Overview:
The record gives the reactivity of an RNA of 207 nucleotides to DMS and 2A3. For DMS the reverse transcriptase was MarathonRT. The reactions ran in a buffer of 150 mM KOAc, 10 mM MgCl2 and 150 mM bicine (pH 8.5), at 24 C. High 2A3 reactivity points to a flexible backbone, as in loops and unpaired stretches.

[RMDB]
RNA sequence: GGGAACGACUCGAGUAGAGUCGAAAAGACUGGAAGGUUGGCAGCUUCUGUAAUCACGCUUCUGUGAGGUCUGAUUGUGGGAUGGCCUGAGGCUGGGAUCUACUGCGUAGCGGACCAGCUCAUGUUGACGGAACGUCCGCACUAAGCUUGCCAUCAACUGAAUAUAAGUGUUCGCACUUAUAUUCAGAAAAGAAACAACAACAACAAC
Reactivity to DMS in 0.01 (KOAc 150mM, MgCl2 10mM, bicine 150mM(pH8.5), 24C), signal-to-noise 4, nucleotides 027 to 156: g000a070c020u010g000g020a070a020g000g020u000u000g040g010c000a300g000c020u010u000c010u020g020u000a070a080u000c010a020c020g030c020u010u010c030u010g010u010g010a040g010g000u000c030u020g000a140u000u010g020u000g010g010g000a060u000g010g020c020c040u000g010a300g020g020c010u000g020g010g020a110u000c010u000a030c010u000g020c220g030u000a040g000c020g000g020a160c010c020a050g000c010u000c050a050u000g020u000u000g020a120c030g030g010a080a140c110g000u000c000c010g000c000a080c050u000a080a130g010c060u000u000g010c010c010a160u000c030a070a280
Reactivity to 2A3 in 0.01 (KOAc 150mM, MgCl2 10mM, bicine 150mM(pH8.5), 24C), signal-to-noise 6, nucleotides 027 to 156: g010a010c020u020g010g010a010a010g040g000u010u010g000g000c000a000g010c000u010u000c000u030g050u050a030a020u010c000a010c010g020c030u300u130c040u260g020u010g020a010g000g000u000c010u030g060a170u060u110g010u080g040g130g000a010u010g010g010c020c030u050g030a050g090g000c010u020g000g020g030a040u050c020u050a040c020u130g140c080g100u050a020g010c040g020g060a040c000c000a010g000c010u010c030a040u080g060u070u070g040a050c030g020g070a190a070c080g040u010c010c010g000c010a010c030u050a050a020g040c040u090u090g010c010c000a020u020c020a010a050